[RMDB]
RNA sequence: GGGAACGACUCGAGUAGAGUCGAAAAUUUUAAUAUUUCAAAGAUCUGACUGCAGCCAUGAGCAGCAAUGAGUGCUUCAAGUGUGGACGAUCUGGCCACUGGGCCCGGGAAUGUCCUACUGGUGGAGGCCGUGGUCGUGGAAUGAGAAGCCGUGGCACAAUAUUACAGAGUUCGCUCUGUAAUAUUGAAAAGAAACAACAACAACAAC
Reactivity to DMS in 0.01 (KOAc 150mM, MgCl2 10mM, bicine 150mM(pH8.5), 24C), signal-to-noise 1, nucleotides 027 to 156: u010u010u000u010a170a250u000a140u000u040u010c010a060a110a110g000a160u000c050u010g010a090c010u000g020c000a060g000c010c040a100u000g010a170g010c010a020g010c010a100a080u020g040a130g010u010g000c000u020u010c060a100a060g060u040g040u010g000g000a040c070g060a140u000c050u000g050g020c010c010a150c130u000g030g000g060c030c000c060g000g000g000a070a120u040g000u000c020c030u000a040c030u010g010g030u000g010g010a120g010g030c010c020g000u000g010g060u010c010g000u000g010g030a120a050u000g000a150g010a100a100g030c040c040g020u000g030g020c010a300
Reactivity to 2A3 in 0.01 (KOAc 150mM, MgCl2 10mM, bicine 150mM(pH8.5), 24C), signal-to-noise 2, nucleotides 027 to 156: u100u120u060u200a120a100u160a190u170u070u120c040a110a150a080g050a050u030c040u120g080a130c020u040g070c050a010g000c030c000a030u050g000a020g050c020a010g000c020a000a080u120g070a050g070u050g060c000u050u060c030a080a020g010u080g040u080g200g000a010c000g040a010u010c060u040g020g010c000c020a140c240u120g050g040g000c070c100c040g000g030g140a130a180u140g000u010c020c000u010a050c010u030g070g070u080g000g030a020g010g000c000c000g080u040g020g010u000c000g030u040g020g040a180a030u090g010a060g010a100a000g060c020c020g030u040g020g000c030a000